[RMDB]
This 177-nucleotide RNA was probed chemically with 2A3 and DMS.

RNA sequence: GGGAACGACUCGAGUAGAGUCGAAAACCACAUCCAGAGGACCCCUUCGACGAACAGAAGACCCUGGACCGGGAGGGAAUAGCCCAUAGUACAAGGGGAGAUGCUAGGAGUCGGGAGAGGUCAGAACGUUGUACUAAGAGUUCGCUCUUAGUACAACAAAAGAAACAACAACAACAAC
Reactivity to 2A3 in 0.01 (KOAc 150mM, MgCl2 10mM, bicine 150mM(pH8.5), 24C), signal-to-noise 3, nucleotides 027 to 126: c010c010a000c020a060u080c040c060a060g030a130g160g070a050c010c010c010c020u020u000c020g010a000c010g030a080a020c010a020g050a080a040g090a070c000c000c000u020g000g010a000c040c020g040g010g050a050g060g070g100a080a130u080a130g040c000c000c030a030u100a060g070u110a040c050a060a080g050g010g050g000a060g000a030u110g060c000u000a020g000g000a030g030u010c030g010g020g000a030g010a010g010g000u000c010a010g020a030a000c050
Reactivity to DMS in 0.01 (KOAc 150mM, MgCl2 10mM, bicine 150mM(pH8.5), 24C), signal-to-noise 2, nucleotides 027 to 126: c000c010a130c210a090u020c050c140a170g020a130g020g040a080c010c040c070c000u000u000c000g020a130c040g010a300a190c020a060g000a080a130g020a170c030c000c020u000g000g010a090c190c230g000g000g010a080g000g000g020a060a150u030a120g010c000c000c000a070u020a090g010u020a060c030a080a080g010g020g000g010a080g000a110u020g010c070u000a040g000g020a300g020u010c030g040g030g040a080g010a030g000g000u000c040a150g020a130a080c190

High DMS reactivity at an A or C suggests that its Watson-Crick edge is free. For DMS the reverse transcriptase was MarathonRT.